[RMDB]
RNA sequence: GGGAACGACUCGAGUAGAGUCGAAAAUACAAGUACGAAAGUACAAGCCUUAUCAGUUGGGCCUUCUGGUCAAAUUAGCGCUCACCCAGGAGGUCCUUCGCAUGAGGUCGACAAGGGCUAAAAGAAACAAGGCAGACGUAUUCGUACGUCUGCCUUGAAAAGAAACAACAACAACAAC
Reactivity to DMS in 0.01 (KOAc 150mM, MgCl2 10mM, bicine 150mM(pH8.5), 24C), signal-to-noise 1, nucleotides 027 to 126: u000a080c160a130a170g000u000a050c010g000a070a060a210g020u000a010c000a110a190g000c000c000u000u000a050u000c210a210g000u000u010g000g010g000c000c000u000u000c020u000g000g000u000c140a070a100a220u000u000a000g000c060g000c050u000c100a110c300c020c000a010g020g000a000g030g050u000c000c000u000u000c040g020c300a060u000g000a000g000g020u000c150g020a070c070a030a030g010g000g000c120u000a040a120a040a050g000a080a070a140